[RMDB]
RNA sequence: GGGAACGACUCGAGUAGAGUCGAAAACUACCUCAGGCAUAGAUUACCUUAUCUGUGUUUGGCAAAACUUUUGGGAAUUUUGGUCCUCAAUGCUCUUCAACUUCGUACUUUAUUUUGGCCUUUUGGACUUUUUUGGAUUCGAGCGUCACUGAUGAGUUCUAUAAUCAGACUUCGGUCUGAUUAUAGAAAAAGAAACAACAACAACAAC
Reactivity to 2A3 in 0.01 (KOAc 150mM, MgCl2 10mM, bicine 150mM(pH8.5), 24C), signal-to-noise 3, nucleotides 027 to 156: c050u120a130c000c010u030c050a020g000g010c000a000u010a030g010a080u070u180a220c020c050u180u180a050u040c010u000g010u000g000u020u030u050g050g020c050a030a070a130a190c060u090u120u140u220g070g000g010a060a060u130u100u100u210g120g010u060c010c020u020c050a040a090u010g030c020u030c010u180u080c040a050a030c040u070u060c100g030u050a050c030u080u250u100a120u170u150u090u080g060g020c000c000u000u030u060u070g000g030a000c000u100u070u070u040u180u190g050g020a050u080u050c030g020a020g010c050g070u050c030a040c090u040g050a070u020g000a080g050u000
This 207-nucleotide RNA was probed chemically with 2A3. Reactivities are given for positions 27 through 156. It was measured as part of the RMDB library VIROID. High 2A3 reactivity points to a flexible backbone, as in loops and unpaired stretches.